Chemical mapping of a 177-nucleotide RNA with DMS and 2A3.

[RMDB]
RNA sequence: GGGAACGACUCGAGUAGAGUCGAAAAGAUAUGGAUGGUGAACUACGCUAUCAAGUUCGAAGAACGGUACUUUAAUCGGAAACGAUUAAAGUACCGGGAGAACGACAUAGCGCACCAUCCUAAGUCACCCUGUAUUAACCUUCGGGUUAAUACAGGGAAAAGAAACAACAACAACAAC
Reactivity to DMS in 0.01 (KOAc 150mM, MgCl2 10mM, bicine 150mM(pH8.5), 24C), signal-to-noise 2, nucleotides 027 to 126: g010a050u000a300u010g020g000a000u000g010g020u000g030a230a090c150u030a300c000g020c000u000a010u010c030a090a300g000u010u000c010g040a090a200g000a190a230c010g000g000u000a000c000u000u000u000a020a010u000c000g010g030a090a170a130c010g000a050u000u000a010a000a020g030u000a000c000c000g000g010g000a130g000a010a020c000g000a300c300a010u000a000g010c040g010c010a030c000c000a010u000c010c010u010a020a080g000u000c030a250
Reactivity to 2A3 in 0.01 (KOAc 150mM, MgCl2 10mM, bicine 150mM(pH8.5), 24C), signal-to-noise 1, nucleotides 027 to 126: g050a020u060a030u190g000g010a000u000g020g080u030g040a100a100c190u260a040c300g030c000u000a020u020c110a170a020g000u000u000c050g130a240a040g060a200a080c020g000g000u000a010c010u030u010u010a000a010u010c010g000g000a030a100a000c030g000a000u000u010a000a020a010g020u010a020c000c010g000g000g010a040g000a000a000c020g010a010c020a050u000a000g000c020g000c010a000c000c010a000u030c000c000u000a040a020g040u000c040a110
The DMS profile rests on 1,309 reads. It was measured as part of the RMDB library TTRINS. For 2A3, 3,369 sequencing reads were counted. As a SHAPE reagent, 2A3 marks flexible, mostly unpaired nucleotides at the ribose 2'-OH.